Description:
An RNA of 207 nucleotides, treated with 2A3 and read out base by base. The 2A3 profile rests on 1,151 reads. For 2A3 the reverse transcriptase was SuperScript II with manganese. The reactions ran in a buffer of 150 mM KOAc, 10 mM MgCl2 and 150 mM bicine (pH 8.5), at 24 C.
RNA sequence: GGGAACGACUCGAGUAGAGUCGAAAAACCAUCGCUACAACUCAACCGGUGUCAUCUCAUGCAGCUCGGAGUGAGGGAUGGGUUGAACAAUGGCACAAUGUAUAUAGCUCACUCCAUGGAUGGGAGUGAGCCAUCCGCAGGUCUAGAGCGUAUGGCAUCAAACGAUUUCGUUCGCGAAAUCGUUUGAAAAAGAAACAACAACAACAAC
Reactivity to 2A3 in 0.01 (KOAc 150mM, MgCl2 10mM, bicine 150mM(pH8.5), 24C), signal-to-noise 2, nucleotides 027 to 156: a000c030c000a030u100c040g020c040u050a070c030a160a040c000u010c040a000a050c020c040g060g020u090g060u050c010a110u040c030u020c050a040u160g070c030a020g040c020u010c070g060g060a060g070u130g030a040g000g060g000a010u050g010g060g010u000u040g000a050a020c070a060a130u060g050g000c020a010c010a060a090u140g070u070a090u030a000u090a140g020c010u040c010a010c000u000c010c040a040u140g090g060a050u190g020g090g000a020g010u010g010a000g000c010c000a050u000c020c010g030c020a000g000g060u000c030u090a010g010a000g000c000g020u110a010u080g000g060c010a040